[RMDB]
RNA sequence: GGGAACGACUCGAGUAGAGUCGAAAACGAGGGCGAUUGGCAGACCGCCGACUUGCCCCGCCCUCGGUUCGCUGAUCAGCGACAGAUCAUGGGUGCCACCGCCACCGCGAUCCAGCAGUCGCUACGCCUACAGCCGGCCGACGGCGGCGCCGACGCCGUCCGUCAUCCUAUUCGUAGGAUGACGGACAAAAGAAACAACAACAACAAC
Reactivity to DMS in 0.01 (KOAc 150mM, MgCl2 10mM, bicine 150mM(pH8.5), 24C), signal-to-noise 1, nucleotides 027 to 156: c030g010a040g040g030g040c000g000a110u000u020g020g050c060a160g000a130c080c040g000c020c000g040a100c080u000u010g000c040c000c100c010g030c010c000c000u000c020g000g050u000u000c100g030c010u020g000a140u030c030a080g010c010g000a080c050a240g010a030u000c010a120u000g040g000g020u000g020c020c090a170c190c110g000c090c030a070c000c030g000c030g000a000u000c010c030a130g000c100a120g010u000c000g020c010u000a050c030g000c040c010u000a080c110a060g000c000c010g040g000c120c030g000a030c010g010g020c020g030g040c130g040c010c030g030a030c020g010c090c070
Reactivity to 2A3 in 0.01 (KOAc 150mM, MgCl2 10mM, bicine 150mM(pH8.5), 24C), signal-to-noise 4, nucleotides 027 to 156: c020g000a060g000g000g030c030g100a200u140u260g040g000c050a040g040a100c020c000g010c020c010g020a050c050u120u150g020c030c000c000c000g000c000c000c010u010c000g000g010u100u110c060g000c030u030g020a140u140c090a010g010c000g000a010c000a020g020a000u030c020a100u210g260g010g000u020g050c070c070a130c060c080g120c090c010a030c000c020g090c040g040a020u020c040c010a040g080c030a010g040u010c000g010c010u030a030c050g060c010c040u110a110c010a030g020c010c030g030g000c040c020g020a020c010g000g000c000g000g000c010g010c010c000g030a040c050g040c060c030
Source information: The record gives the reactivity of an RNA of 207 nucleotides to DMS and 2A3. The reactions ran in a buffer of 150 mM KOAc, 10 mM MgCl2 and 150 mM bicine (pH 8.5), at 24 C. 2A3 adducts were read by reverse transcription with SuperScript II with manganese. For 2A3, 3,047 sequencing reads were counted. For DMS, 2,520 sequencing reads were counted.